Notes
The record gives the reactivity of an RNA of 177 nucleotides to DMS. For DMS, 1,016 sequencing reads were counted. DMS adducts were read by reverse transcription with MarathonRT.

RNA sequence: GGGAACGACUCGAGUAGAGUCGAAAAACGAUGUCGUUCGCGACAUCGUAAAUUGUAUAACCUUGCUUGAAGUCUACUUGGUUGUAAAGCGAGACAACUCAGUGAGAGUCCUAUUCGUAGGACUCAAUACACUUCGUCCUUUCGAGGACGAAGUGUAAAAAGAAACAACAACAACAAC
Reactivity to DMS in 0.01 (KOAc 150mM, MgCl2 10mM, bicine 150mM(pH8.5), 24C), signal-to-noise 1, nucleotides 027 to 126: a050c000g010a000u010g010u000c010g000u000u000c170g010c020g020a050c000a010u000c000g030u000a050a100a060u000u030g020u010a110u000a080a140c160c000u010u000g010c040u050u000g030a080a180g000u000c000u010a090c110u000u000g000g000u000u000g010u000a050a140a020g010c060g000a020g000a080c060a050a050c100u020c120a070g010u020g010a250g000a030g000u000c000c000u000a010u000u000c160g000u000a020g000g000a020c000u000c000a020a140